[RMDB]
RNA sequence: GGGAACGACUCGAGUAGAGUCGAAAACAAAGCGUGGUUUUAAUACCACUAUGCAAGCCAAGUCUAAGUCGCUGAACAUCUAUAAUGUAUUAGGCAUCAGGUAAGUACACAAUUCUCUAAGCGAUGAUCAUCAUAUGGACUUCGGUCCAUAUGAUGAAAAAGAAACAACAACAACAAC
Reactivity to 2A3 in 0.01 (KOAc 150mM, MgCl2 10mM, bicine 150mM(pH8.5), 24C), signal-to-noise 5, nucleotides 027 to 126: c050a000a100a000g070c060g010u020g020g090u020u050u070u170a200a120u220a040c010c040a000c010u020a010u050g020c030a030a100g010c000c010a060a000g000u000c010u020a070a040g010u010c010g010c050u030g040a070a030c010a050u040c060u130a120u060a200a130u100g060u060a050u040u040a040g040g000c010a030u030c040a030g060g070u070a120a080g040u070a030c040a010c010a080a100u080u020c040u020c020u050a040a010g010c000g020a020u070g040a040
Reactivity to DMS in 0.01 (KOAc 150mM, MgCl2 10mM, bicine 150mM(pH8.5), 24C), signal-to-noise 4, nucleotides 027 to 126: c080a060a100a190g040c130g010u000g010g020u000u000u010u060a100a110u010a020c000c010a000c020u010a070u000g000c050a050a110g020c020c070a090a130g030u010c040u000a080a110g000u000c010g030c020u020g010a090a070c130a030u000c110u010a080u050a070a070u000g000u000a090u010u010a050g000g030c040a050u020c180a090g000g010u010a040a060g030u010a040c100a050c210a080a140u000u010c040u010c020u020a080a060g010c050g010a070u010g000a130